[RMDB]
Chemical mapping of a 207-nucleotide RNA with 2A3. The reactions ran in a buffer of 150 mM KOAc, 10 mM MgCl2 and 150 mM bicine (pH 8.5), at 24 C. 2A3 adducts were read by reverse transcription with SuperScript II with manganese. It was measured as part of the RMDB library OK3TST.
RNA sequence: GGGAACGACUCGAGUAGAGUCGAAAAUCGUAAAUCUGUUUCUAAAGAACGGAGAAUAUCUAUACAUACCUGAUUAGAAUUCAUCCGUCCUUCAGACAACAUCUCAGACAGUCUGGUCUUGUAUGUCUUAAUCAUAUUCUUAUGAAACUUGGAAACAAGACUCUUUAGUCUUCGGACUAAAGAGUCUAAAAGAAACAACAACAACAAC
Reactivity to 2A3 in 0.01 (KOAc 150mM, MgCl2 10mM, bicine 150mM(pH8.5), 24C), signal-to-noise 2, nucleotides 027 to 156: u080c020g000u040a050a050a100u030c030u090g030u010u020u010c000u080a130a050a020g010a010a040c020g000g010a030g010a010a010u070a120u000c010u040a020u040a070c050a120u170a110c000c070u080g010a120u010u040a020g000a000a020u060u050c030a160u000c160c030g010u000c010c010u060u090c040a050g000a000c010a010a000c010a020u080c070u020c080a030g030a110c030a010g100u100c060u100g070g000u030c020u090u050g010u060a230u060g010u000c000u020u080a020a020u100c070a020u010a080u080u050c010u100u090a070u100g020a020a050a100c000u030u030g010g000a010a040a000c010a030